[RMDB]
RNA sequence: GGGAACGACUCGAGUAGAGUCGAAAAAGUCGAAGGUGAGCGAGAACAUCAGGCCUCGCCUUAUAAACUACGGAAGCCUUGUGGCUCGCGUCUGCGACCACAUGCUGUUUGGACCCUUCGUCAAGUGCACAUCGAGUCAAUUCGUUGACUCGAUGUGAAAAGAAACAACAACAACAAC
Reactivity to 2A3 in 0.01 (KOAc 150mM, MgCl2 10mM, bicine 150mM(pH8.5), 24C), signal-to-noise 2, nucleotides 027 to 126: a000g030u010c010g000a010a000g020g010u100g040a040g020c020g000a010g010a060a020c030a160u220c090a030g130g040c020c000u020c010g000c000c000u030u030a060u050a030a090a010c050u140a060c070g080g060a060a000g020c020c080u020u040g000u000g020g000c090u010c010g000c010g120u140c200u250g010c000g010a000c020c000a010c000a000u030g020c010u100g080u080u090u040g060g020a050c000c000c000u010u010c010g030u020c040a100a040g120u120g110
Reactivity to DMS in 0.01 (KOAc 150mM, MgCl2 10mM, bicine 150mM(pH8.5), 24C), signal-to-noise 7, nucleotides 027 to 126: a090g010u000c020g010a030a020g010g010u010g010a130g000c020g010a070g000a070a090c100a120u020c260a160g010g010c110c010u000c040g010c020c060u000u000a080u010a040a060a110c080u000a160c060g020g010a080a030g010c010c100u010u000g020u000g000g010c220u000c000g010c000g000u000c280u020g030c000g000a030c000c000a010c010a020u000g000c020u000g000u000u000u000g000g000a150c140c000c000u000u010c010g010u000c020a080a110g020u010g000

Source information:
An RNA of 177 nucleotides, treated with 2A3 and DMS and read out base by base. It was measured as part of the RMDB library OK2TRN. For DMS the reverse transcriptase was MarathonRT. The RNA was probed in 150 mM KOAc, 10 mM MgCl2 and 150 mM bicine (pH 8.5) at 24 C.